An RNA of 207 nucleotides, treated with DMS and 2A3 and read out base by base.
For DMS, 2,965 sequencing reads were counted.
2A3 adducts were read by reverse transcription with SuperScript II with manganese.
The 2A3 profile rests on 3,781 reads.
The data come from the RNA Mapping Database (RMDB), library RNAMAK.
High 2A3 reactivity points to a flexible backbone, as in loops and unpaired stretches.
Values cover nucleotides 27 to 156.

RNA sequence: GGGAACGACUCGAGUAGAGUCGAAAAAAACGCUGGGUAUGGAGAAGGCUGAUCGUGGUAGUAUCGGUCUGAAGCGCGCACGGACCGCCGAGCUACCUUGAGGCCUUCGAUGAAAUACCUGUGCUGAAGCGCGCACGGCAACCGAAAGGUGCGAAAACUAUCUGUACAAGUUCGCUUGUACAGAUAGAAAAGAAACAACAACAACAAC
Reactivity to DMS in 0.01 (KOAc 150mM, MgCl2 10mM, bicine 150mM(pH8.5), 24C), signal-to-noise 2, nucleotides 027 to 156: a100a050a080c100g030c020u010g020g020g090u010a040u000g010g030a230g010a060a060g010g020c020u010g000a130u000c160g070u010g020g010u000a060g030u010a060u000c010g010g010u020c000u000g000a030a040g030c030g010c000g000c030a300c010g040g000a060c000c020g040c190c050g000a300g010c020u000a020c000c010u030u010g000a270g030g000c010c030u000u010c020g000a080u000g000a120a080a080u000a000c020c000u030g010u020g040c020u000g000a130a050g010c050g040c000g000c000a240c100g000g000c010a130a110c050c020g000a110a120a120g000g010u010g000c030g000a090a080a110a230
Reactivity to 2A3 in 0.01 (KOAc 150mM, MgCl2 10mM, bicine 150mM(pH8.5), 24C), signal-to-noise 3, nucleotides 027 to 156: a000a000a000c040g000c020u040g000g010g010u000a000u030g020g020a080g010a030a000g010g030c030u080g060a130u070c080g110u110g040g000u000a010g010u030a160u260c020g000g020u010c010u020g020a120a060g020c020g000c000g010c020a010c030g010g020a010c000c010g070c090c080g010a030g030c000u010a000c010c000u010u100g050a040g030g000c000c000u000u000c010g000a010u010g010a010a030a000u000a000c010c000u010g060u050g000c020u050g000a100a030g000c000g010c020g000c010a000c000g040g010c030a100a090c000c000g030a130a050a020g000g010u040g010c040g000a070a060a000a030